[RMDB]
RNA sequence: GGGAACGACUCGAGUAGAGUCGAAAAUGCAAAUCUUAUGUAGAAGAUCAAGCUAGCUGCAUAAUGUAUUUGAAGAGAAUUUUAGAUGAGCCUUCAAGAGUACUUGAUCUAGUCCAUAGGUGCAGUCCCACGGUCACGCGUUCGCGCGUGACCGUGGAAAAGAAACAACAACAACAAC
Reactivity to 2A3 in 0.01 (KOAc 150mM, MgCl2 10mM, bicine 150mM(pH8.5), 24C), signal-to-noise 1, nucleotides 027 to 126: u170g040c000a000a000a120u140c030u000u000a000u030g040u060a070g070a020a000g000a000u000c000a000a000g220c060u140a000g030c030u150g000c100a150u290a240a190u300g180u040a070u040u000u170g000a000a000g100a000g000a010a010u050u130u150u120a010g000a150u300g060a030g040c000c000u000u090c000a040a040g000a000g030u000a030c000u000u000g000a000u000c000u000a030g000u000c000c000a000u000a000g000g000u030g000c000a000g080u000c000

An RNA of 177 nucleotides, treated with 2A3 and read out base by base. Reactivities are given for positions 27 through 126. For 2A3, 311 sequencing reads were counted.